The record gives the reactivity of an RNA of 207 nucleotides to 2A3 and DMS.
The DMS profile rests on 14,648 reads.
2A3 adducts were read by reverse transcription with SuperScript II with manganese.
For DMS the reverse transcriptase was MarathonRT.
Source: RMDB library OK3TST, as collected in RNAgym.
2A3 is a SHAPE reagent: it acylates the 2'-hydroxyl of flexible nucleotides of all four kinds.
The RNA was probed in 150 mM KOAc, 10 mM MgCl2 and 150 mM bicine (pH 8.5) at 24 C.
Values cover nucleotides 27 to 156.
RNA sequence: GGGAACGACUCGAGUAGAGUCGAAAAGGGUUUGAGCCAUCGCCCGAAUAAGAUGGAUGAUACAAGUCGCCAUUGUACGCGACGUAGUACGUACUCAUUAGUGCGAAAGCACGGUUAGUCCGACUAGGCAGGGACGAUCUUCUGUCAAUACUUAGAAAUUAUCACGAUUAUUCGUAAUCGUGAUAAUAAAAGAAACAACAACAACAAC
Reactivity to 2A3 in 0.01 (KOAc 150mM, MgCl2 10mM, bicine 150mM(pH8.5), 24C), signal-to-noise 7, nucleotides 027 to 156: g060g000g000u060u100u160g110a030g020c010c010a020u020c010g030c010c010c010g040a060a110u150a050a030g010a010u020g020g020a040u080g040a030u070a100c080a100a050g000u010c000g000c010c030a120u110u280g070u150a070c050g000c010g010a010c010g000u000a000g010u020a080c010g000u010a010c010u000c020a020u030u090a100g000u000g000c010g050a100a010a000g000c000a000c000g020g020u000u010a010g010u010c030c010g000a010c010u040a050g020g000c010a000g030g010g030a040c080g060a120u020c010u170u020c010u050g020u010c000a040a160u100a140c060u080u150a050g090a040a160
Reactivity to DMS in 0.01 (KOAc 150mM, MgCl2 10mM, bicine 150mM(pH8.5), 24C), signal-to-noise 5, nucleotides 027 to 156: g020g020g020u000u000u000g020a100g030c030c060a090u000c080g010c020c020c020g000a070a100u000a060a130g000a070u000g020g010a080u000g020a080u010a060c080a090a140g010u000c000g020c000c050a180u000u010g030u020a130c080g020c010g020a060c020g000u000a110g040u000a050c030g020u000a040c020u010c070a110u010u000a070g040u000g010c010g000a120a110a220g020c020a030c010g010g000u010u000a110g020u000c020c020g030a240c050u000a070g010g000c030a110g010g010g010a060c030g010a090u000c100u000u000c050u000g000u000c020a070a080u000a070c050u000u000a080g010a110a110